Conditions: 150 mM KOAc, 10 mM MgCl2 and 150 mM bicine (pH 8.5), 24 C. Chemical mapping of a 177-nucleotide RNA with 2A3 and DMS.
RNA sequence: GGGAACGACUCGAGUAGAGUCGAAAAGAUAUGGAGAAGAGCGCAUCGGUGGGAUACGUUAGGUCGGAAACGACCUCAACGGAGCGAACUACUCUUCUCCUAAGUCAAACACACCUUCGGGUGUGAAGGCUUAAAUUAAGUUCGCUUAAUUUAAGCCAAAAGAAACAACAACAACAAC
Reactivity to 2A3 in 0.01 (KOAc 150mM, MgCl2 10mM, bicine 150mM(pH8.5), 24C), signal-to-noise 9, nucleotides 027 to 126: g010a000u020a010u070g000g000a010g000a010a000g010a000g020c110g020c230a180u180c160g150g050u200g080g240g060a120u090a170c000g000u000u010a000g000g000u010c000g000g000a000a020a000c000g000a000c000c000u000c010a000a010c000g010g000a030g110c130g120a060a010c020u050a020c000u050c000u000u000c000u000c000c000u000a000a000g000u000c000a010a130a020c010a000c000a010c010c000u040u080c300g140g000g000u020g000u010g030a030a050
Reactivity to DMS in 0.01 (KOAc 150mM, MgCl2 10mM, bicine 150mM(pH8.5), 24C), signal-to-noise 9, nucleotides 027 to 126: g010a020u000a120u010g000g000a020g000a020a010g000a020g020c180g040c160a120u010c090g000g010u010g030g010g010a140u000a100c000g010u000u000a030g000g010u000c000g010g000a020a030a060c000g000a010c000c000u000c270a000a000c000g010g010a090g010c070g010a060a080c100u000a130c010u000c000u000u000c000u000c000c000u000a000a050g000u000c020a110a110a220c000a010c000a010c000c000u000u010c180g020g010g010u000g010u000g000a060a080